[RMDB]
RNA sequence: GGGAACGACUCGAGUAGAGUCGAAAAGUCCUGUUGCUUCAGGUGAAACUGCAUUAUUUGUGGGGACGGACGCUGAUGAUUAUUCUCAUCAUGGUUAACAGCUUCACCGUAACCGGCAAACUGCAGAAACCUAAACCUACUUCGGUAGGUUUAGGUUAAAAGAAACAACAACAACAAC
Reactivity to DMS in 0.01 (KOAc 150mM, MgCl2 10mM, bicine 150mM(pH8.5), 24C), signal-to-noise 3, nucleotides 027 to 126: g020u000c010c000u000g010u000u010g010c080u000u000c120a050g000g020u010g010a090a100a270c030u000g000c020a020u000u020a200u000u000u000g040u000g010g000g020g000a040c010g010g020a120c300g000c020u000g000a110u000g000a020u000u000a080u000u010c140u000c200a080u010c140a040u000g000g020u000u000a060a160c000a000g000c000u010u010c300a090c000c000g000u000a040a060c030c000g000g000c020a020a020a040c290u010g000c010a020g000a100
Reactivity to 2A3 in 0.01 (KOAc 150mM, MgCl2 10mM, bicine 150mM(pH8.5), 24C), signal-to-noise 1, nucleotides 027 to 126: g010u020c000c000u000g030u030u100g000c070u070u070c030a020g070g080u080g070a060a060a020c020u020g010c010a020u040u060a080u070u150u050g070u060g040g030g040g010a000c030g000g020a020c020g000c050u020g010a000u010g030a000u030u030a060u260u030c100u010c080a130u050c020a010u090g100g000u050u130a040a020c020a010g000c020u080u060c030a030c030c010g020u020a100a070c010c000g000g000c000a010a010a010c020u020g040c000a000g080a020
The record gives the reactivity of an RNA of 177 nucleotides to DMS and 2A3. For 2A3 the reverse transcriptase was SuperScript II with manganese. Source: RMDB library OK2TST, as collected in RNAgym. Conditions: 150 mM KOAc, 10 mM MgCl2 and 150 mM bicine (pH 8.5), 24 C.